[RMDB]
The record gives the reactivity of an RNA of 207 nucleotides to 2A3. Conditions: 150 mM KOAc, 10 mM MgCl2 and 150 mM bicine (pH 8.5), 24 C.
RNA sequence: GGGAACGACUCGAGUAGAGUCGAAAACAGUGUAAAACCUGACAGCACUUGUGGAUAUUUUGAGCUCUAUCUCUAAAUGUGAACCUGUCCUUUAGUUGGGAAGAUAAGAGUCAGGAAAGCACCAAAUGCCGAGUGUGAACUCAUUUUGCUCUGGAAAUACGUGGCACGGUUUCGACCGUGCCACGUAAAAAGAAACAACAACAACAAC
Reactivity to 2A3 in 0.01 (KOAc 150mM, MgCl2 10mM, bicine 150mM(pH8.5), 24C), signal-to-noise 1, nucleotides 027 to 156: c010a000g010u000g030u040a110a110a010a110c050c000u010g000a010c040a050g080c060a080c140u140u100g020u030g060g070a010u010a070u180u170u030u020g010a010g000c030u020c050u300a080u110c010u040c010u040a030a030a030u050g040u000g110a150a160c000c000u030g040u120c000c000u200u070u100a090g190u260u080g010g010g000a000a000g010a000u080a040a000g020a010g010u060c000a020g000g070a080a000a000g010c010a010c000c070a070a070a070u110g000c040c010g010a040g020u020g000u010g090a150a100c040u010c030a050u030u050u010u000g000c040u000c040u100g040g080a000a020a110